Record summary:
An RNA of 177 nucleotides, treated with DMS and 2A3 and read out base by base. The 2A3 profile rests on 21,664 reads.
RNA sequence: GGGAACGACUCGAGUAGAGUCGAAAAAGUUCAGUCCUGUGAGGCUGAAAAGGGGUCGGAAUGACAAAGAAGGGCGAUGUAUGCCCAUCUUGUUUGGUGAUAAGCGCGCCAUCCCCCGCUUCACAGGCCAAUAUGUAUAGUUCGCUAUACAUAUUGGAAAAGAAACAACAACAACAAC
Reactivity to DMS in 0.01 (KOAc 150mM, MgCl2 10mM, bicine 150mM(pH8.5), 24C), signal-to-noise 8, nucleotides 027 to 126: a100g000u010u000c070a110g010u010c000c000u000g010u000g000a030g010g010c010u000g010a030a030a100a100g010g010g010g020u000c090g010g000a120a100u020g010a020c020a060a030a050g010a020a090g010g010g010c000g020a150u010g020u010a100u010g000c000c000c000a020u000c010u000u000g010u000u000u010g010g030u000g000a150u010a090a120g030c190g010c060g010c010c010a110u010c010c000c000c050c080g000c020u000u000c000a000c010a020g000g000
Reactivity to 2A3 in 0.01 (KOAc 150mM, MgCl2 10mM, bicine 150mM(pH8.5), 24C), signal-to-noise 9, nucleotides 027 to 126: a010g050u070u050c030a020g030u050c010c010u000g010u010g010a010g010g010c060u090g100a090a040a030a030g020g010g000g010u060c080g060g130a200a120u240g010a030c020a050a090a020g010a010a030g020g000g000c040g040a060u250g120u300a100u300g020c000c000c000a010u000c000u000u020g020u040u040u080g020g000u030g040a120u070a300a090g090c090g000c000g000c090c000a030u040c000c000c000c000c010g010c010u000u010c000a000c000a000g000g000
High DMS reactivity at an A or C suggests that its Watson-Crick edge is free. Values cover nucleotides 27 to 126. The reactions ran in a buffer of 150 mM KOAc, 10 mM MgCl2 and 150 mM bicine (pH 8.5), at 24 C. It was measured as part of the RMDB library RFMREP.